[RMDB]
RNA sequence: GGGAACGACUCGAGUAGAGUCGAAAAAGAAAGAGAGCGUAGCACACACACAGACUAAGUGUGACACACACCUACGCUACAUGUGUGUGUGAAGUCGAGAUAUCGACAAGUGUGUGUGAUGAAAAAACUACCCCGUGUCGUUCGCGACACGGGGUAGAAAAGAAACAACAACAACAAC
Reactivity to 2A3 in 0.01 (KOAc 150mM, MgCl2 10mM, bicine 150mM(pH8.5), 24C), signal-to-noise 1, nucleotides 027 to 126: a020g090a020a070a000g190a000g000a010g020c010g040u070a010g000c010a000c010a020c010a000c000a010c000a060g020a040c030u090a270a060g150u210g030u060g170a000c000a060c000a000c000a000c000c010u070a020c040g000c060u010a000c040a040u120g060u040g000u010g000u000g000u030g070a060a010g000u000c000g020a010g050a140u300a020u110c000g060a000c070a090a090g040u020g000u000g010u070g000u000g020a060u030g090a090a000a000a000a000a000
Reactivity to DMS in 0.01 (KOAc 150mM, MgCl2 10mM, bicine 150mM(pH8.5), 24C), signal-to-noise 1, nucleotides 027 to 126: a100g000a100a060a080g000a180g010a080g000c010g040u030a040g020c010a030c000a000c030a000c000a010c000a080g020a170c080u010a020a080g030u000g010u010g000a210c030a030c000a010c020a000c000c020u000a120c030g000c080u000a060c190a070u010g060u010g010u000g020u010g010u000g000a030a120g000u000c000g030a050g010a240u010a100u000c010g020a000c000a070a030g010u000g040u000g010u000g010u000g010a070u000g000a000a010a020a100a030a100